[RMDB]
RNA sequence: GGGAACGACUCGAGUAGAGUCGAAAAACACAAAUGUCUUUAAUGCAAAAAAAGCUAAAGUAGUCUAACGAAUAUACAGUUGUGUAUAAUAAAAAUAAGCCACUUUCAGAAAUAAUACUAAAAAACAUAGUGCGCAUUGCAGAAAGAUAUACAAAGCGCUAUGUAAUGAGUUCGCUCAUUACAUAGCAAAAGAAACAACAACAACAAC
Reactivity to 2A3 in 0.01 (KOAc 150mM, MgCl2 10mM, bicine 150mM(pH8.5), 24C), signal-to-noise 1, nucleotides 027 to 156: a000c030a020c030a040a040a040u020g000u000c000u030u080u050a100a080u130g020c050a090a000a000a000a000a000a090g080c080u110a120a000a030g020u050a080g070u040c010u100a070a000c040g100a080a030u010a000u020a040c010a030g110u230u080g010u000g030u020a020u000a100a060u080a020a170a060a000a060u100a130a000g010c030c000a030c030u000u030u140c110a050g120a170a220a070u250a090a000u120a130c020u140a050a040a180a000a040a000c030a000u080a000g010u020g000c070g020c120a020u020u120g000c000a000g120a000a000a040g020a060u070a000u030a060c150a000a080a000g060c080